RNA sequence: GGGAACGACUCGAGUAGAGUCGAAAAGAUAUGGAACACUACUUUCGACGAUCUACCUCUCGGAAACGAGAGGGUAGGGAGAAAGGGUGUUCCUAAGUCAAAACCCAAUGUGUUCGCACAUUGGGAAGAUCAAACCAAUGUUCGCAUUGGUUUGAUCAAAAGAAACAACAACAACAAC
Reactivity to 2A3 in 0.01 (KOAc 150mM, MgCl2 10mM, bicine 150mM(pH8.5), 24C), signal-to-noise 3, nucleotides 027 to 126: g000a000u030a020u070g010g000a010a000c010a000c030u300a260c030u050u010u020c090g300a300c010g000a150u020c000u000a010c010c000u020c000u000c010g000g040a010a020a030c010g010a000g040a050g040g000g000u000a010g000g000g020a030g000a000a000a000g000g000g000u000g010u000u000c000c000u000a000a000g010u000c000a040a050a110a220c020c010c000a000a000u000g010u000g020u050u130c300g000c150a000c010a000u000u010g000g000g000a010a030
Reactivity to DMS in 0.01 (KOAc 150mM, MgCl2 10mM, bicine 150mM(pH8.5), 24C), signal-to-noise 2, nucleotides 027 to 126: g010a020u000a080u010g000g000a010a010c000a010c000u000a110c010u000u000u000c000g010a090c280g030a010u010c000u010a000c000c000u010c000u000c000g020g010a040a010a030c000g000a010g000a020g010g000g000u000a000g000g000g020a020g000a000a020a020g000g000g010u000g010u000u000c000c000u000a000a030g000u010c000a110a060a090a180c020c000c000a010a000u000g020u000g010u010u010c250g020c000a020c000a000u000u000g000g010g010a030a030